[RMDB]
RNA sequence: GGGAACGACUCGAGUAGAGUCGAAAAUUGACGGUGGGGUCGUCUUUACUCCAAUGAGCAUCGAACCACAGCGAAGUGGUUUCAUCGCAAAGAUGCAUUAGUCACGGAGCCACGUGGACAUGGCUAAACCAGGUGACUAUUUCGAUAGUCACCUGGUAAAAGAAACAACAACAACAAC
Reactivity to 2A3 in 0.01 (KOAc 150mM, MgCl2 10mM, bicine 150mM(pH8.5), 24C), signal-to-noise 1, nucleotides 027 to 126: u050u090g020a010c020g000g020u020g010g000g020g000u090c010g060u010c020u100u070u080a060c010u050c040c000a030a120u230g070a030g020c040a010u020c040g070a030a050c020c000a050c010a030g190c150g230a270a050g040u000g000g000u020u030u030c030a030u050c070g040c080a060a060a000g000a000u020g020c000a020u000u110a040g000u040c030a000c020g000g020a040g000c070c020a070c060g020u060g060g000a010c070a090u040g030g000c010u050a150a040
Reactivity to DMS in 0.01 (KOAc 150mM, MgCl2 10mM, bicine 150mM(pH8.5), 24C), signal-to-noise 2, nucleotides 027 to 126: u010u000g000a040c000g010g000u070g030g010g000g000u000c050g010u000c010u000u000u000a110c050u010c020c070a070a080u020g000a140g020c020a020u000c010g010a050a020c010c030a010c000a160g020c120g040a190a170g030u000g000g000u000u000u010c060a070u000c150g050c180a080a070a120g010a030u010g000c070a140u000u000a040g000u020c040a030c030g010g000a160g020c000c030a040c120g040u020g010g010a110c120a070u000g010g000c030u000a040a040
Source: RMDB library OK2TRN, as collected in RNAgym. Chemical mapping of a 177-nucleotide RNA with 2A3 and DMS. The RNA was probed in 150 mM KOAc, 10 mM MgCl2 and 150 mM bicine (pH 8.5) at 24 C. For 2A3, 932 sequencing reads were counted. For 2A3 the reverse transcriptase was SuperScript II with manganese.